[RMDB]
RNA sequence: GGGAACGACUCGAGUAGAGUCGAAAAGGUUUGGUGACCGCGCUUGGUGGCCGCACGGCCGUCGUCAAGCGGCUCGACCGCUUUACCAAAAAGCUCAACGUCGGCCCCAACGAACCCUAUCUGUGGGAUAUGAACAAGUGUUCGCACUUGUUCAUAUAAAAGAAACAACAACAACAAC
Reactivity to DMS in 0.01 (KOAc 150mM, MgCl2 10mM, bicine 150mM(pH8.5), 24C), signal-to-noise 7, nucleotides 027 to 126: g010g010u000u010u020g020g010u010g010a090c030c040g010c030g020c160u000u000g010g020u020g020g010c000c010g020c160a080c170g010g000c020c040g010u010c190g030u010c160a060a090g000c010g000g000c050u010c180g010a130c060c080g000c020u010u000u000a080c120c210a030a080a060a110a050g000c030u010c070a110a230c210g010u010c010g010g000c020c020c000c010a030a060c100g010a070a140c010c000c000u010a090u020c080u020g020u010g010g010g000
Reactivity to 2A3 in 0.01 (KOAc 150mM, MgCl2 10mM, bicine 150mM(pH8.5), 24C), signal-to-noise 9, nucleotides 027 to 126: g100g020u070u120u140g110g040u140g060a110c020c020g010c010g010c090u030u040g040g020u140g100g000c010c020g050c040a060c060g040g000c020c010g030u060c010g040u030c020a030a020g000c000g010g000c030u100c080g290a300c010c010g000c010u040u020u050a070c030c010a060a020a030a050a010g070c080u090c100a090a070c080g080u100c010g060g000c010c000c000c010a010a010c020g020a020a070c010c000c010u070a100u140c100u080g140u140g070g040g030

The record gives the reactivity of an RNA of 177 nucleotides to DMS and 2A3. It was measured as part of the RMDB library OK1LIB. DMS adducts were read by reverse transcription with MarathonRT. The 2A3 profile rests on 19,717 reads. Values cover nucleotides 27 to 126. The DMS profile rests on 15,487 reads. The reactions ran in a buffer of 150 mM KOAc, 10 mM MgCl2 and 150 mM bicine (pH 8.5), at 24 C.